[RMDB]
RNA sequence: GGGAACGACUCGAGUAGAGUCGAAAAAGCUGAUCAGCUGACUGAGAUCAGGAUCCUAGUCUCAGCUGAUCGAUCUCAGGAAGGAUCGACUAGGAAGAGGACUCUAGGAUCGACUAGUCCUUCGAUCAGGAAGAGAGGACUAGCUUCCUAGUCGAAGCUCGCAUUAGCCUUUCGAGGCUAAUGCGAGAAAAGAAACAACAACAACAAC
Reactivity to 2A3 in 0.01 (KOAc 150mM, MgCl2 10mM, bicine 150mM(pH8.5), 24C), signal-to-noise 1, nucleotides 027 to 156: a030g130c160u120g000a010u020c000a000g030c000u000g000a110c010u050g090a020g040a120u150c060a120g110g040a010u010c020c000u000a020g000u110c070u060c060a010g000c030u070g000a000u020c020g000a020u000c030u050c060a040g070g080a110a070g090g030a060u000c000g000a000c020u000a000g000g020a000a010g020a050g100g060a040c010u060c040u140a060g030g000a030u020c000g030a010c000u010a000g010u000c020c000u150u030c060g050a130u130c030a060g140g100a170a040g060a000g020a050g030g000a000c000u000a010g000c000u000u020c000c000u010a010g000u000c000g000a000a000g000